[RMDB]
RNA sequence: GGGAACGACUCGAGUAGAGUCGAAAAAAUGGUAUACUAGACUUUGAAGAUUACAUACUAAGAGAAGAAGUACUUGUAAAUAUUGAUGUAAAAUCACAACUUCGCAUUAUGCAACCAUAUUAUCACACAUUAUACUCCUUUUACGAACAUACCGGUAACUUCCUGAUUGAUUCGUCAAUCAGGAAGUAAAAGAAACAACAACAACAAC
Reactivity to 2A3 in 0.01 (KOAc 150mM, MgCl2 10mM, bicine 150mM(pH8.5), 24C), signal-to-noise 7, nucleotides 027 to 156: a000a000u090g010g010u070a080u020a070c040u030a060g040a100c020u100u060u090g050a090a050g040a140u170u140a060c030a050u110a050c050u100a120a030g030a010g010a190a000g020a030a010g020u030a100c020u060u050g040u080a030a110a090u140a080u090u110g030a040u030g030u090a020a070a070a080u090c030a020c010a150a080c040u120u110c060g000c030a060u080u090a040u250g000c000a020a020c010c010a010u040a060u130u100a060u130c020a010c010a000c000a070u060u090a060u140a110c040u060c020c020u050u080u090u100a030c010g030a080a010c020a050u090a070c030c010g020g030u050a030
Reactivity to DMS in 0.01 (KOAc 150mM, MgCl2 10mM, bicine 150mM(pH8.5), 24C), signal-to-noise 3, nucleotides 027 to 156: a040a090u000g010g010u010a040u010a120c060u010a110g000a170c070u000u000u000g010a130a110g000a210u010u000a060c060a120u010a110c100u000a070a100g000a090g010a100a070g010a070a070g010u000a060c090u010u010g000u000a060a080a080u000a060u000u000g010a060u000g040u000a040a070a130a090u000c050a070c060a040a120c020u000u000c060g010c110a090u010u000a020u000g010c080a060a050c050c020a110u000a050u000u000a090u000c040a070c070a050c070a060u000u000a070u000a040c020u010c010c030u010u020u000u000a130c040g000a080a040c040a130u000a110c020c010g000g010u000a080
Annotation: An RNA of 207 nucleotides, treated with 2A3 and DMS and read out base by base. The RNA was probed in 150 mM KOAc, 10 mM MgCl2 and 150 mM bicine (pH 8.5) at 24 C. High 2A3 reactivity points to a flexible backbone, as in loops and unpaired stretches. Values cover nucleotides 27 to 156.